[RMDB]
RNA sequence: GGGAACGACUCGAGUAGAGUCGAAAAAAAGAAUAGCUGAAUAAGAGAAGUUGUAGAAAAACGGCCAAGUUAGUGAUCUUAAUGGUUCAGCCAAUGGCAUUUUACAUACCUUCAACUAAGGGUCCUAGAUUGAGUGUUUUUUCGAAAACACUCAAUCAAAAGAAACAACAACAACAAC
Reactivity to DMS in 0.01 (KOAc 150mM, MgCl2 10mM, bicine 150mM(pH8.5), 24C), signal-to-noise 3, nucleotides 027 to 126: a020a090a120g000a090a070u000a030g010c030u000g020a080a040u010a110a100g000a190g000a050a060g000u000u000g000u010a060g020a040a050a030a100a050c210g000g010c030c010a020a060g000u000u010a050g030u000g010a060u000c020u000u000a090a090u000g010g000u000u000c030a050g020c010c070a080a070u010g000g010c030a080u000u010u000u000a040c070a070u000a050c090c040u000u000c060a040a060c090u020a050a090g000g010g000u000c010c020u000a090
Reactivity to 2A3 in 0.01 (KOAc 150mM, MgCl2 10mM, bicine 150mM(pH8.5), 24C), signal-to-noise 2, nucleotides 027 to 126: a010a010a040g110a030a070u110a050g010c020u070g080a100a050u190a170a050g080a020g020a100a040g020u090u050g020u080a030g000a060a050a010a000a020c040g070g000c010c010a030a010g020u060u030a120g020u110g070a030u040c020u040u070a140a090u170g040g010u040u060c020a020g090c050c030a050a080u020g030g000c030a000u020u040u010u010a020c030a010u060a030c000c000u040u010c010a020a060c050u060a050a000g050g000g030u010c010c010u000a010

An RNA of 177 nucleotides, treated with DMS and 2A3 and read out base by base. For DMS, 2,125 sequencing reads were counted. Conditions: 150 mM KOAc, 10 mM MgCl2 and 150 mM bicine (pH 8.5), 24 C. Source: RMDB library OK2TRN, as collected in RNAgym.